[RMDB]
RNA sequence: GGGAACGACUCGAGUAGAGUCGAAAAUUGAAUAGUGAUUGAGCUUCGAAACGUUAACUUCAGUCGGUCGACGUCUUAACUGGUGCGGAAGACAAUAUCAUGUAAUGCGAUAUGGCGAGUGUUAUGUCCUACCACAGUGAUUCGUCACUGUGGUAGGAAAAGAAACAACAACAACAAC
Reactivity to 2A3 in 0.01 (KOAc 150mM, MgCl2 10mM, bicine 150mM(pH8.5), 24C), signal-to-noise 4, nucleotides 027 to 126: u080u050g030a020a030u060a110g050u030g060a100u030u030g020a020g050c020u040u020c070g060a100a040a060c020g030u040u140a070a030c030u080u060c080a070g030u050c000g070g010u050c050g030a040c060g030u030c010u030u090a140a100c050u080g020g070u130g070c040g050g010a040a000g040a010c020a040a010u060a020u100c060a030u100g060u210a140a000u100g040c040g030a060u010a050u180g080g000c030g020a030g030u020g020u060u070a110u160g040u000
Reactivity to DMS in 0.01 (KOAc 150mM, MgCl2 10mM, bicine 150mM(pH8.5), 24C), signal-to-noise 2, nucleotides 027 to 126: u010u000g050a090a070u000a090g000u020g000a120u000u010g010a140g020c000u000u000c050g000a050a060a070c090g030u000u010a050a030c100u000u000c060a110g000u010c060g010g000u030c130g000a050c070g010u000c060u000u000a040a100c130u000g010g030u000g000c060g000g020a060a080g010a030c070a060a050u030a040u010c000a060u010g000u010a060a170u020g000c080g020a020u050a030u000g000g000c070g000a060g000u000g000u010u000a090u010g000u000